[RMDB]
RNA sequence: GGGAACGACUCGAGUAGAGUCGAAAAGAUAUGGAUUGUGACAUGCGUAGGUGUCGGAAACGACACCGCGCAACAGCACACGGUCCUAAGUCAAACGCGUACUUUACCUUCGGGUAAAGUACGCGAACACUUCCUCAGGCUUCGGCCUGAGGAAGUGAAAAGAAACAACAACAACAAC
Reactivity to DMS in 0.01 (KOAc 150mM, MgCl2 10mM, bicine 150mM(pH8.5), 24C), signal-to-noise 1, nucleotides 027 to 126: g000a020u000a300u000g030g000a020u010u000g020u000g000a190c010a140u010g000c010g010u000a140g070g000u010g010u010c010g010g000a140a020a200c000g000a000c010a000c000c000g000c010g010c010a000a040c180a130g000c150a060c000a010c040g000g010u000c000c000u000a020a100g000u000c000a080a130a270c010g000c000g010u000a000c000u000u010u000a000c050c000u000u010c190g000g000g030u000a000a010a020g010u000a000c020g000c000g000a040a090
Reactivity to 2A3 in 0.01 (KOAc 150mM, MgCl2 10mM, bicine 150mM(pH8.5), 24C), signal-to-noise 1, nucleotides 027 to 126: g070a010u070a040u200g010g010a010u000u020g000u010g060a050c130a120u060g000c000g010u020a300g000g000u000g000u000c060g030g000a100a080a020c000g020a000c020a000c010c000g010c000g030c000a010a000c070a040g120c090a010c000a020c110g010g000u050c040c000u020a190a010g100u040c080a080a030a140c030g020c010g030u000a000c000u040u030u000a000c000c000u070u120c300g080g000g020u000a000a000a000g000u010a000c060g000c030g030a000a000